Chemical mapping of a 177-nucleotide RNA with DMS and 2A3.
RNA sequence: GGGAACGACUCGAGUAGAGUCGAAAACGAGCUCUUUUCCUCCUGGGGGCCUGGUGUGCAAUGGCUGCAAACAGCAGAUUCCUUGGUAGUGUAUGCAGCCUGCUUCUUGUAUGGGUUGCCUCUAAGGUUCUGCGAUUUACUUCGGUAAAUCGCAGAAAAAAGAAACAACAACAACAAC
Reactivity to DMS in 0.01 (KOAc 150mM, MgCl2 10mM, bicine 150mM(pH8.5), 24C), signal-to-noise 1, nucleotides 027 to 126: c030g000a070g020c030u000c030u000u000u000u000c040c000u000c000c020u070g000g000g000g000g000c050c040u000g000g080u070g040u000g020c110a070a000u110g000g000c000u000g000c020a030a010a100c010a120g070c100a030g000a150u000u000c070c050u000u010g030g040u020a120g070u020g000u000a040u010g000c050a040g000c010c000u000g000c050u000u010c140u000u070g000u000a090u010g000g000g000u010u030g000c010c010u020c000u040a030a040g000g000
Reactivity to 2A3 in 0.01 (KOAc 150mM, MgCl2 10mM, bicine 150mM(pH8.5), 24C), signal-to-noise 2, nucleotides 027 to 126: c040g000a020g090c030u000c010u070u000u000u000c000c000u000c020c000u010g010g000g000g060g000c000c010u000g070g110u210g070u040g090c040a060a110u210g000g000c000u000g030c000a090a080a000c020a000g030c010a020g080a220u110u120c040c030u090u060g110g000u160a120g050u000g020u070a030u110g000c000a000g000c010c000u000g050c000u000u090c000u030u160g070u150a150u140g090g000g050u070u110g060c000c000u050c000u000a120a020g040g000
Conditions: 150 mM KOAc, 10 mM MgCl2 and 150 mM bicine (pH 8.5), 24 C. The data come from the RNA Mapping Database (RMDB), library RFM100. For 2A3, 581 sequencing reads were counted. Values cover nucleotides 27 to 126.